[RMDB]
Conditions: 150 mM KOAc, 10 mM MgCl2 and 150 mM bicine (pH 8.5), 24 C. Chemical mapping of a 177-nucleotide RNA with DMS. Source: RMDB library OK2TRN, as collected in RNAgym.
RNA sequence: GGGAACGACUCGAGUAGAGUCGAAAAUUGAGAUGCCAGAUAUGUUACCUAACUACCGGAGCAGGAAUUGCCAAAGGAAAUUUUGUCUGAAUUCCAAGUAGGAGCUCCCCACCAAGACAAAAUCCAGGUCCUCAAAUAAGUUCGCUUAUUUGAGGACAAAAGAAACAACAACAACAAC
Reactivity to DMS in 0.01 (KOAc 150mM, MgCl2 10mM, bicine 150mM(pH8.5), 24C), signal-to-noise 2, nucleotides 027 to 126: u010u010g020a070g010a060u010g000c050c020a100g000a140u000a060u000g000u000u000a050c060c040u020a100a160c070u020a050c120c070g010g030a120g030c030a060g000g000a110a080u000u000g000c050c040a050a090a160g010g010a080a030a070u000u000u000u000g000u000c010u000g000a070a080u000u000c030c010a070a190g000u000a070g000g010a120g010c110u000c030c000c010c050a100c120c060a030a060g010a050c060a010a030a050a050u010c070c070a170g030